[RMDB]
RNA sequence: GGGAACGACUCGAGUAGAGUCGAAAAGUUCAGUAUCAAGGUCUAUGAUAACAAAACACAAAGCUUCAGACUGCCACUCAACCAAUACUGCGUCAAGCAAGACUCCACAGUCAAGAACAUCAGUAAGACAAUCGACAACUUCACCGAAGGCAACUUCCUGUAUGCGCUACUUCGGUAGCGCAUACAGAAAAGAAACAACAACAACAAC
Reactivity to 2A3 in 0.01 (KOAc 150mM, MgCl2 10mM, bicine 150mM(pH8.5), 24C), signal-to-noise 1, nucleotides 027 to 156: g000u050u000c030a090g020u060a040u100c030a070a000g010g060u010c000u050a010u090g030a030u100a300a000c050a070a170a100a000c100a040c030a090a010a010g030c000u120u060c010a040g000a080c000u050g030c020c010a030c050u020c000a010a140c010c010a000a020u000a050c000u030g040c040g150u100c000a010a010g030c000a000a000g040a000c000u010c040c140a110c050a030g010u010c000a070a070g010a010a060c030a040u130c010a020g050u150a110a000g150a010c020a000a160u180c070g050a030c030a150a090c000u010u050c040a100c150c030g080a040a010g010g030c010a020a010c020u050u020c030
The record gives the reactivity of an RNA of 207 nucleotides to 2A3.